[RMDB]
RNA sequence: GGGAACGACUCGAGUAGAGUCGAAAAUGAGCGGAACCACCAGUCCCCGACAGCGUCGUUAGAACACUCGAAUAAUACGUGGUAGUCGCUUUCUGAGCGGAUCGAUCCUUUGUCGGCGGUUACGAGGCGGUCAGAAAGACGAGAGGGCCAGUUAUGAAAAGAAGAAGCUAUUCGUAGCUUCUUCUUUAAAAGAAACAACAACAACAAC
Reactivity to DMS in 0.01 (KOAc 150mM, MgCl2 10mM, bicine 150mM(pH8.5), 24C), signal-to-noise 3, nucleotides 027 to 156: u000g000a110g030c020g000g000a080a080c030c010a060c030c030a130g020u000c030c010c000c020g010a100c020a070g020c060g040u000c040g020u010u000a120g020a090a080c050a040c030u000c030g010a080a120u010a090a120u000a050c070g020u000g020g020u000a130g020u000c030g020c030u000u000u010c040u010g010a070g010c010g020g030a090u010c030g000a090u000c010c020u000u010u000g020u000c060g000g030c120g010g000u010u000a070c040g010a080g010g030c020g020g010u000c010a060g000a040a020a060g030a110c000g000a120g020a110g010g000g000c020c030a090g000u010u000a090u010g000a130
Reactivity to 2A3 in 0.01 (KOAc 150mM, MgCl2 10mM, bicine 150mM(pH8.5), 24C), signal-to-noise 2, nucleotides 027 to 156: u130g000a000g050c040g000g080a010a000c030c020a000c040c030a080g040u080c020c000c020c010g030a040c000a020g020c010g030u030c030g000u060u180a050g080a150a010c040a030c080u030c050g050a070a040u190a150a010u080a090c080g060u030g050g000u040a040g110u050c020g040c000u010u070u040c040u040g010a060g090c000g070g000a010u040c000g020a040u060c050c000u090u090u130g080u080c000g020g050c030g060g000u070u020a040c010g020a020g020g020c020g000g060u010c000a010g080a030a040a000g040a100c030g000a020g020a000g080g040g030c000c020a000g020u050u090a110u300g120a050